[RMDB]
RNA sequence: GGGAACGACUCGAGUAGAGUCGAAAAGUGGCGACAUCGAUGCUGCUGUCAUCCAGGUGCUCUUUGAGCGCUUCACGCUAAAACUGGAGGGCACUACAUCCAACGAAUCUCGCCUGUCGCUCCAGCAGACCGGGCGCGGAUUCGUCCGCGCCCGGUCAAAAGAAACAACAACAACAAC
Reactivity to 2A3 in 0.01 (KOAc 150mM, MgCl2 10mM, bicine 150mM(pH8.5), 24C), signal-to-noise 2, nucleotides 027 to 126: g030u070g000g120c010g010a010c020a180u100c200g050a040u120g000c050u000g010c020u000g000u020c050a030u000c100c000a010g040g000u030g040c020u000c040u110u270u300g100a070g000c030g040c000u140u170c130a130c170g070c190u250a050a080a100a060c010u010g000g000a000g000g040g000c000a000c000u000a000c040a000u000c020c070a010a110c100g020a070a040u000c050u040c070g040c000c040u020g030u040c000g030c000u010c000c000a080g050c040a010